[RMDB]
RNA sequence: GGGAACGACUCGAGUAGAGUCGAAAAGCCGAGCCCAACCAGAUUGUGCUGCGUAUCGACCCCGAUCCGGGUAUGCGACUGCAGAUUUCGGCCCACACCGACGACUCGUGGCGAGAUAUCCACCUGGCCAACCUAUGACAUUCGUGUCAUAGGUUGGAAAAGAAACAACAACAACAAC
Reactivity to DMS in 0.01 (KOAc 150mM, MgCl2 10mM, bicine 150mM(pH8.5), 24C), signal-to-noise 2, nucleotides 027 to 126: g010c020c050g050a130g000c110c000c030a150a180c090c090a060g000a130u000u010g000u000g020c050u010g000c040g020u000a150u000c040g020a140c140c000c000c000g000a120u010c130c150g020g000g020u000a040u000g000c060g040a050c140u000g010c060a060g000a070u000u000u000c010g030g030c000c030c060a090c160a130c160c000g000a100c040g010a070c040u000c040g000u010g000g000c000g000a080g000a110u020a070u000c040c040a110c090c060u000g010g000
Reactivity to 2A3 in 0.01 (KOAc 150mM, MgCl2 10mM, bicine 150mM(pH8.5), 24C), signal-to-noise 2, nucleotides 027 to 126: g040c000c010g040a040g030c000c020c020a010a070c010c030a100g080a300u100u130g090u080g080c010u010g020c030g000u040a070u090c050g050a080c000c000c020c030g030a090u010c110c010g000g000g040u030a060u120g050c010g060a170c090u080g000c020a000g030a120u080u070u040c020g000g000c050c030c000a090c020a030c000c020g070a050c020g010a020c010u020c040g010u030g010g000c000g030a060g000a040u110a050u010c030c030a040c010c060u030g050g000
The record gives the reactivity of an RNA of 177 nucleotides to DMS and 2A3. Conditions: 150 mM KOAc, 10 mM MgCl2 and 150 mM bicine (pH 8.5), 24 C.